[RMDB]
RNA sequence: GGGAACGACUCGAGUAGAGUCGAAAAGGCCAGCCGUUCGUCCUUUCUUUCUUUCUUAAUAGCAUUAAGCUGGUCGAGCGUGGACGUAUAAAGCCGGAGCGUGUAGCCCUGGAUGGCAUUGGCGCUGGCUAUGGUGAUUCUUCGGAAUCACCAUAGCAAAAGAAACAACAACAACAAC
Reactivity to DMS in 0.01 (KOAc 150mM, MgCl2 10mM, bicine 150mM(pH8.5), 24C), signal-to-noise 3, nucleotides 027 to 126: g000g020c020c010a030g000c020c020g020u000u000c020g020u000c030c010u000u010u010c030u000u000u000c030u010u000u000c030u000u000a060a060u010a110g010c080a300u010u000a020a080g020c030u000g010g010u000c070g010a020g010c180g010u010g040g000a030c030g000u000a100u000a060a130a120g010c000c020g020g010a080g010c010g040u040g000u010a180g000c020c010c030u010g020g000a070u010g000g020c030a160u010u000g010g010c030g010c040u000g000
Reactivity to 2A3 in 0.01 (KOAc 150mM, MgCl2 10mM, bicine 150mM(pH8.5), 24C), signal-to-noise 2, nucleotides 027 to 126: g070g000c030c010a000g030c000c030g030u060u040c010g040u040c040c000u090u110u000c000u000u120u020c000u000u170u010c000u070u130a140a120u080a150g080c000a080u090u070a080a000g020c030u010g080g000u060c070g020a010g000c020g040u080g030g030a020c040g020u100a130u070a190a110a030g030c020c040g000g030a030g000c050g000u150g180u240a020g000c020c000c000u010g080g020a080u100g020g000c070a070u020u130g060g010c050g040c050u010g040

The data come from the RNA Mapping Database (RMDB), library OK2TST. This 177-nucleotide RNA was probed chemically with DMS and 2A3. Reactivities are rounded to 0.1 and cut off at 0 and 3. The RNA was probed in 150 mM KOAc, 10 mM MgCl2 and 150 mM bicine (pH 8.5) at 24 C. 2A3 adducts were read by reverse transcription with SuperScript II with manganese.